[RMDB]
RNA sequence: GGGAACGACUCGAGUAGAGUCGAAAACUCUGAAGGCAUGAUCACCCCGUCCGAUGCGGAAGUUCGUGCUUCUGUCGAACGCGAAAGUCGGACGGCGGCCAUGAGUCGCAACGCAAAGCCGCGGCAAUAAGCUCGUCGUCGUUCGCGACGACGAGAACUAUGUAGUCUGCUUCGGCAGACUACAUAGAAAAGAAACAACAACAACAAC
Reactivity to 2A3 in 0.01 (KOAc 150mM, MgCl2 10mM, bicine 150mM(pH8.5), 24C), signal-to-noise 2, nucleotides 027 to 156: c040u010c030u020g140a260a080g060g000c000a020u020g010a040u100c050a040c000c000c000c020g000u020c010c000g000a010u090g040c040g070g130a120a060g040u010u090c030g080u080g090c010u140u080c040u090g100u070c050g030a040a000c030g000c010g140a110a090a020g020u020c000g020g000a010c010g000g000c020g010g000c000c000a010u010g020a010g060u020c020g000c010a110a120c110g060c220a150a050a020g000c040c010g000c030g000g030c020a030a100u100a100a000g050c010u000c010g000u000c000g010u000c010g020u000u030c130g000c010g100a000c000g010a000c000g000a000g000a000a000
Chemical mapping of a 207-nucleotide RNA with 2A3.
For 2A3, 1,049 sequencing reads were counted.
The reactions ran in a buffer of 150 mM KOAc, 10 mM MgCl2 and 150 mM bicine (pH 8.5), at 24 C.
It was measured as part of the RMDB library M2RFPK.